[RMDB]
RNA sequence: GGGAACGACUCGAGUAGAGUCGAAAAGUGAUGAUGCUGGAGGAACUUGGUUUCGGUCUGGACCUCAAGGAAUGCGCGGCGACGGGGCGGAAGGAUGACCUGAUCUAUGUGUCUCCGAAAUCAGGCACAAAAUGCCAUUAUUCGUAAUGGCAUUUUGAAAAGAAACAACAACAACAAC
Reactivity to 2A3 in 0.01 (KOAc 150mM, MgCl2 10mM, bicine 150mM(pH8.5), 24C), signal-to-noise 5, nucleotides 027 to 126: g090u070g030a100u040g000a030u080g000c040u060g040g030a030g030g020a070a080c030u070u080g040g010u040u070u050c050g020g020u000c030u040g060g040a090c010c010u070c070a040a040g060g030a130a060u130g040c050g000c020g030g020c020g020a030c030g000g000g020g000c030g010g030a050a040g060g020a030u070g030a040c010c010u020g020a040u020c030u070a080u080g070u010g030u040c020u000c050c010g010a010a010a010u030c020a010g040g000c040a010
Reactivity to DMS in 0.01 (KOAc 150mM, MgCl2 10mM, bicine 150mM(pH8.5), 24C), signal-to-noise 9, nucleotides 027 to 126: g020u000g010a100u010g010a070u000g020c080u000g010g010a100g010g010a050a090c070u000u000g010g000u000u000u000c140g020g000u010c050u000g010g000a090c040c030u000c100a080a110g010g010a080a080u000g010c060g020c050g010g010c050g000a090c090g000g000g000g010c070g010g000a090a070g010g010a100u000g000a070c020c020u000g000a040u000c060u010a090u010g010u010g010u000c010u000c040c030g010a050a070a040u000c050a020g000g010c080a160